[RMDB]
Chemical mapping of a 177-nucleotide RNA with 2A3 and DMS. The RNA was probed in 150 mM KOAc, 10 mM MgCl2 and 150 mM bicine (pH 8.5) at 24 C. For DMS the reverse transcriptase was MarathonRT. It was measured as part of the RMDB library TTRDES. The DMS profile rests on 1,074 reads.
RNA sequence: GGGAACGACUCGAGUAGAGUCGAAAAAAAAAGAUAUGGAUCUACUACCCACCAAUAUAGAUCUUGGACCCUUCGUCGGAAACGACGAAGGCUAGAUUGGGUAUUGAGGUAGAUCCUAAGUCAAAAACGUACAAUUCUUGUUCGCAAGAAUUGUACGAAAAGAAACAACAACAACAAC
Reactivity to 2A3 in 0.01 (KOAc 150mM, MgCl2 10mM, bicine 150mM(pH8.5), 24C), signal-to-noise 1, nucleotides 027 to 126: a000a000a000a000a000g150a030u160a080u120g000g000a010u000c000u020a010c010u150a180c030c000c000a050c010c010a080a010u090a020u060a070g110a050u000c000u050u090g130g030a150c050c000c000u020u010c000g000u020c000g010g020a090a020a150c060g000a000c030g000a000a030g020g060c000u040a020g010a050u000u160g300g240g120u010a090u010u100g070a050g040g010u010a010g000a010u050c000c000u000a090a000g140u090c040a010a000a010a020a300
Reactivity to DMS in 0.01 (KOAc 150mM, MgCl2 10mM, bicine 150mM(pH8.5), 24C), signal-to-noise 2, nucleotides 027 to 126: a090a060a060a110a030g010a040u000a290u000g000g010a020u000c000u000a030c040u010a190c020c000c020a300c060c010a000a010u000a040u010a300g000a000u000c030u000u000g030g010a260c300c000c000u000u000c000g020u000c000g000g000a120a020a080c030g040a000c020g000a000a020g030g040c010u000a000g020a030u010u000g000g020g050u020a080u010u040g000a090g000g000u000a000g000a000u010c000c000u000a000a130g010u090c100a060a110a070a100a130